[RMDB]
RNA sequence: GGGAACGACUCGAGUAGAGUCGAAAACUCGUUUGGGUGCUCUUGGGGUUGACAAGUGAGAUGCUUGCGGGUGUUUUUUCUUGUGCCCGUCUCAAGGCCCCUUGGCUCCUGCGAUUUUAAAGCUGGAGGGUGCGAGGGAGUUCGCUCCCUCGCACUCAAAAGAAACAACAACAACAAC
Reactivity to 2A3 in 0.01 (KOAc 150mM, MgCl2 10mM, bicine 150mM(pH8.5), 24C), signal-to-noise 1, nucleotides 027 to 126: c010u010c010g010u040u240u060g080g000g010u020g000c010u000c010u300u000g000g000g000g000u010u070g020a060c000a070a040g020u060g080a160g040a150u250g090c010u050u040g010c000g000g110g000u020g000u020u120u040u000u200u060c090u090u070g000u130g010c000c000c000g000u000c010u020c030a040a030g000g010c050c020c000c000u000u050g020g020c030u020c000c000u000g000c000g000a070u000u020u000u160a170a080a130g030c000u010g000g000a010